Structure probing data (2A3) for a 207-nucleotide construct. For 2A3, 585 sequencing reads were counted. Values cover nucleotides 27 to 156. It was measured as part of the RMDB library M2RFPK. Conditions: 150 mM KOAc, 10 mM MgCl2 and 150 mM bicine (pH 8.5), 24 C.
[RMDB]
RNA sequence: GGGAACGACUCGAGUAGAGUCGAAAAAUCACCGGUGGGGAACCCCAUACGGCAACGGCGUAGAAGUAAAUGCUAACCAAUCCGUGGUAUCUCCGCGACGGAGCAUCCACGGAUAACUCUAACAAGGCUAAGCGUCUCGGUUUCGACCGAGACGCAACUGUGUAAGAGACUUCGGUCUCUUACACAGAAAAGAAACAACAACAACAAC
Reactivity to 2A3 in 0.01 (KOAc 150mM, MgCl2 10mM, bicine 150mM(pH8.5), 24C), signal-to-noise 1, nucleotides 027 to 156: a000u040c010a010c000c000g010g000u050g020g000g000g090a070a120c040c010c000c000a020u160a230c050g000g000c040a100a000c090g070g000c000g010u050a010g000a220a010g050u100a090a150a120u210g020c070u020a050a080c020c040a060a030u020c000c000g010u000g000g000u060a090u040c000u000c010c000g040c100g150a100c210g020g000a000g000c040a000u000c000c000a000c000g050g010a000u020a000a000c010u010c010u120a070a060c030a070a000g110g000c040u070a120a000g000c000g000u000c010u030c000g010g080u070u060u130c210g070a060c000c010g030a000g050a000c000g010c000a010a010